Conditions: 150 mM KOAc, 10 mM MgCl2 and 150 mM bicine (pH 8.5), 24 C. Structure probing data (DMS) for a 177-nucleotide construct.
[RMDB]
RNA sequence: GGGAACGACUCGAGUAGAGUCGAAAAUGAACCAUCGCGAGCUGGGAGAGGAGAGGCGAAGAUAGCAGCGGAGACCCCGGUCCGAAUGCCCGUCGGCAGCAAACUCCUCUGGAGUCCUUCGGAUCCAUCAUAUUCCCAGGUUCGCCUGGGAAUAUGAAAAAGAAACAACAACAACAAC
Reactivity to DMS in 0.01 (KOAc 150mM, MgCl2 10mM, bicine 150mM(pH8.5), 24C), signal-to-noise 1, nucleotides 027 to 126: u000g000a130a180c060c020a030u010c070g030c020g010a070g000c120u010g030g020g000a110g010a120g000g010a050g010a140g020g000c050g000a140a060g040a110u000a130g020c050a030g000c070g000g010a080g030a160c040c010c010c050g000g010u000c010c010g010a010a070u000g010c050c010c160g030u010c070g000g000c040a080g000c070a040a150a100c010u020c020c010u020c160u010g000g000a070g030u010c080c070u000u000c050g010g010a130u000c080c090a090
The data come from the RNA Mapping Database (RMDB), library 15KREP. For DMS, 639 sequencing reads were counted.